[RMDB]
Description: This 207-nucleotide RNA was probed chemically with 2A3.
RNA sequence: GGGAACGACUCGAGUAGAGUCGAAAAAACUCAUCUCUAAAAAAUAAAUAGAUGCAUGUUUAUGUGAACCUAAGGAUGAAUUUCAGUGACUGUAGAUUAGAAGAACUGAUUAUAGCAUUGGCUGCUUGGUGUUCACUUUAUUUGCAUCUGUGAGUUAUCAUACCUCCAGUUUCGACUGGAGGUAUGAAAAAGAAACAACAACAACAAC
Reactivity to 2A3 in 0.01 (KOAc 150mM, MgCl2 10mM, bicine 150mM(pH8.5), 24C), signal-to-noise 2, nucleotides 027 to 156: a000a000c060u070c060a090u080c040u010c020u150a140a100a080a150a090a130u120a140a140a150u170a130g010a000u000g000c020a010u020g030u040u020u040a100u270g000u000g000a010a000c000c000u020a020a000g060g040a100u090g080a160a150u030u110u140c000a000g030u000g200a240c020u010g030u030a030g080a300u020u000a030g090a280a000g090a190a050c010u030g010a010u000u070a060u030a020g030c010a000u000u020g020g000c020u050g130c000u030u000g020g000u250g010u160u000c000a000c000u020u010u000a040u010u000u010g010c000a010u000c000u000g020u010g010a050g000u090u050a040
The reactions ran in a buffer of 150 mM KOAc, 10 mM MgCl2 and 150 mM bicine (pH 8.5), at 24 C. For 2A3, 583 sequencing reads were counted.